[RMDB]
RNA sequence: GGGAACGACUCGAGUAGAGUCGAAAAUGUUCCCACCAUCCCAGCUUUUCCACACUGCGCCUGGGUUCUCACUCAAGUGUUCGGCAGCUUCCACUUACGAGGCCGCGGUCUACCGCUGUCACUGGUAGUCGCGAAGAGUUCGUCUCUGUCAGCCUUGCAUUACAAUGCGGUUCGCCGCAUUGUAAUGAAAAGAAACAACAACAACAAC
Reactivity to 2A3 in 0.01 (KOAc 150mM, MgCl2 10mM, bicine 150mM(pH8.5), 24C), signal-to-noise 3, nucleotides 027 to 156: u110g020u000u000c020c000c000a000c000c000a070u040c010c000c000a000g040c060u080u060u110u070c050c020a080c030a040c090u110g010c030g020c030c010u040g000g000g000u040u040c040u030c040a060c020u080c030a090a010g040u030g060u160u080c040g050g020c000a000g010c040u050u030c030c000a050c060u130u170a050c070g010a020g000g040c030c000g010c000g030g070u050c000u000a010c010c000g050c230u130g200u300c060a090c150u070g000g000u000a000g000u010c000g000c000g020a010a020g010a000g010u110u200c130g100u040c070u000c010u040g080u070c060a030g010c000c010u010u020g000
Reactivity to DMS in 0.01 (KOAc 150mM, MgCl2 10mM, bicine 150mM(pH8.5), 24C), signal-to-noise 1, nucleotides 027 to 156: u010g020u010u010c000c000c010a140c060c050a070u020c010c010c010a180g030c040u000u010u030u030c020c020a120c050a100c040u000g030c040g000c000c010u000g030g040g030u000u010c060u000c120a070c050u010c070a110a080g010u020g040u010u000c030g080g000c040a090g000c020u010u000c010c050a130c070u020u000a160c080g000a100g030g030c000c040g000c010g010g050u010c000u000a040c020c030g000c020u020g000u000c160a110c120u000g030g010u000a020g010u000c020g010c000g000a060a090g010a030g020u000u000c050g010u010c030u000c000u000g020u000c050a130g020c000c000u000u010g010
Structure probing data (2A3 and DMS) for a 207-nucleotide construct. The 2A3 profile rests on 1,859 reads. The DMS profile rests on 3,000 reads.